Chemical mapping of a 177-nucleotide RNA with DMS and 2A3. High DMS reactivity at an A or C suggests that its Watson-Crick edge is free. For DMS, 1,125 sequencing reads were counted. 2A3 adducts were read by reverse transcription with SuperScript II with manganese. High 2A3 reactivity points to a flexible backbone, as in loops and unpaired stretches. Source: RMDB library OK2TRN, as collected in RNAgym. The RNA was probed in 150 mM KOAc, 10 mM MgCl2 and 150 mM bicine (pH 8.5) at 24 C.

RNA sequence: GGGAACGACUCGAGUAGAGUCGAAAACUGGAGUGACUCAGUCCCUCAUCAAUGACCUGAAACCGUCACUCCUUGGAGGAUGGAUAGUUGAGUCCUGAAGGGAUGUGAUUAGUCUGUAAGUACGAGCGCCUGCUUUCAUGUUCGCAUGAAAGCAGGCAAAAGAAACAACAACAACAAC
Reactivity to DMS in 0.01 (KOAc 150mM, MgCl2 10mM, bicine 150mM(pH8.5), 24C), signal-to-noise 1, nucleotides 027 to 126: c050u010g020g030a040g020u000g010a040c030u000c030a140g000u000c030c010c030u010c070a090u000c120a070a140u030g000a030c070c040u000g010a100a030a120c140c140g010u000c000a100c010u000c000c010u010u000g020g000a100g000g000a050u000g000g000a060u000a040g020u020u000g010a120g000u020c010c170u000g010a120a050g000g000g020a020u000g000u000g000a050u020u000a080g000u000c020u000g010u010a060a070g010u020a090c160g020a100g020c300
Reactivity to 2A3 in 0.01 (KOAc 150mM, MgCl2 10mM, bicine 150mM(pH8.5), 24C), signal-to-noise 1, nucleotides 027 to 126: c020u070g100g000a000g070u060g010a020c060u060c040a040g050u040c030c050c040u040c030a200u040c000a000a210u130g000a010c020c000u110g020a190a000a070c080c060g000u020c000a040c250u050c030c000u010u190g060g060a010g000g060a020u040g020g000a040u080a120g110u060u150g070a040g020u020c020c060u010g110a060a040g050g100g000a010u090g070u130g150a120u030u070a030g060u020c040u000g080u040a120a000g060u030a040c120g040a120g040c150